[RMDB]
Description:
Conditions: 150 mM KOAc, 10 mM MgCl2 and 150 mM bicine (pH 8.5), 24 C. This 177-nucleotide RNA was probed chemically with DMS and 2A3. It was measured as part of the RMDB libraries RFM100 and RFMREP.

RNA sequence: GGGAACGACUCGAGUAGAGUCGAAAAGAAAGAAAGAGGAGGUAAAGCUGAAGAGAGCCGUCUAUUGACAGUUCGUUUCUAUACUUAUGUACUGUCAUGGAGUCGCUCUCUUCAGAUGAUCCUUUAACCUCUUGUUCUUUUUCGAAAGAACAAGAGGAAAAGAAACAACAACAACAAC
Reactivity to DMS in 0.01 (KOAc 150mM, MgCl2 10mM, bicine 150mM(pH8.5), 24C), signal-to-noise 6, nucleotides 027 to 126: g010a120a090a070g010a070a080a070g000a070g010g010a030g010g010u000a090a160a100g000c000u000g000a020a010g000a010g010a000g020c040c300g010u010c000u000a020u020u020g010a000c000a010g010u000u000c010g000u000u000u020c200u010a130u040a100c230u050u020a040u010g010u000a010c000u000g020u000c010a000u000g000g000a060g020u030c260g000c010u000c000u000c000u010u000c000a000g000a010u000g000a160u010c010c000u000u000u020a090a130
Reactivity to 2A3 in 0.01 (KOAc 150mM, MgCl2 10mM, bicine 150mM(pH8.5), 24C), signal-to-noise 9, nucleotides 027 to 126: g070a010a030a010g110a040a080a010g080a040g040g010a010g010g040u120a090a090a020g010c000u000g000a010a000g000a000g000a000g020c080c080g110u000c010u030a100u070u120g000a000c000a000g000u010u090c030g020u040u100u070c180u180a230u050a200c070u150u100a050u160g020u020a000c000u000g010u010c000a010u010g030g010a050g050u160c030g000c000u000c000u000c000u000u000c000a000g000a000u000g000a000u090c000c000u010u010u020a030a040